The record gives the reactivity of an RNA of 177 nucleotides to 2A3 and DMS. It was measured as part of the RMDB library TTRDEL. For 2A3 the reverse transcriptase was SuperScript II with manganese. Reactivities are rounded to 0.1 and cut off at 0 and 3.

[RMDB]
RNA sequence: GGGAACGACUCGAGUAGAGUCGAAAAGAUAUGGAACGGAGCUAGAGCUGGGUCGGAAACGACCCUAGCUCUUGGACCUCCAUUCCUAAGUCAAAGACUCAUACUGCGUUCGCGCAGUAUGAGUCAACCUUAUCUAAGGGUUCGCCCUUAGAUAAGGAAAAGAAACAACAACAACAAC
Reactivity to 2A3 in 0.01 (KOAc 150mM, MgCl2 10mM, bicine 150mM(pH8.5), 24C), signal-to-noise 2, nucleotides 027 to 126: g020a020u090a030u130g000g000a020a030c050g020g000a000g020c020u020a010g000a010g000c010u020g000g000g000u010c010g010g020a110a030a020c000g000a000c000c040c000u020a010g000c010u030c000u010u050g000g020a010c010c000u000c000c000a010u000u000c010c000u040a180a020g030u020c080a180a070a070g010a000c000u000c000a000u000a000c000u000g020c000g040u050u090c240g010c010g000c120a000g000u000a000u000g000a000g010u000c000a000a000
Reactivity to DMS in 0.01 (KOAc 150mM, MgCl2 10mM, bicine 150mM(pH8.5), 24C), signal-to-noise 7, nucleotides 027 to 126: g010a030u000a180u010g000g000a020a010c060g000g000a020g010c020u000a010g010a010g020c000u000g000g000g010u000c000g020g000a040a050a090c000g010a010c000c000c020u000a000g020c000u000c000u000u000g010g000a080c300c000u000c000c000a070u000u000c000c000u000a030a130g000u000c030a090a120a110g000a010c000u000c000a010u000a000c000u000g010c000g020u000u020c240g020c010g000c000a000g000u000a000u000g000a000g000u000c000a020a040